This 177-nucleotide RNA was probed chemically with DMS and 2A3. The RNA was probed in 150 mM KOAc, 10 mM MgCl2 and 150 mM bicine (pH 8.5) at 24 C. For DMS, 1,601 sequencing reads were counted.

RNA sequence: GGGAACGACUCGAGUAGAGUCGAAAAGGCAACUCUUGGAAGGUUUGGGGUAAUUCUAAGGAUGCAGCCAGGUUUGAGGGGCUUCCUUGCUGAUUCUUAUUGCAGGGAAGUGCAUUCAGUUAGGGUAUAGUUCUCCAUCUUUCGAGAUGGAGAACUAAAAAGAAACAACAACAACAAC
Reactivity to DMS in 0.01 (KOAc 150mM, MgCl2 10mM, bicine 150mM(pH8.5), 24C), signal-to-noise 1, nucleotides 027 to 126: g000g030c060a090a090c100u000c030u000u000g010g000a050a080g020g010u000u000u010g010g010g000g000u000a030a110u010u030c060u010a030a050g010g010a090u010g000c050a100g020c040c020a120g010g000u000u010u000g010a080g010g000g010g000c010u000u000c000c000u010u010g000c020u010g030a100u000u000c240u030u020a090u010u000g010c020a020g010g010g000a020a020g020u000g010c040a040u000u010c010a080g000u010u000a080g010g010g010u010a180
Reactivity to 2A3 in 0.01 (KOAc 150mM, MgCl2 10mM, bicine 150mM(pH8.5), 24C), signal-to-noise 1, nucleotides 027 to 126: g040g000c010a020a050c030u000c030u160u100g070g040a030a040g040g070u110u180u170g050g040g000g070u090a020a140u020u010c050u040a140a000g050g000a030u030g030c020a030g120c040c010a010g010g090u080u130u160g050a040g000g000g050g040c000u000u040c010c000u000u000g000c010u010g030a120u100u050c020u130u280a240u200u100g000c030a000g020g000g000a000a000g040u000g000c000a010u010u170c020a000g020u040u150a060g070g080g000u090a050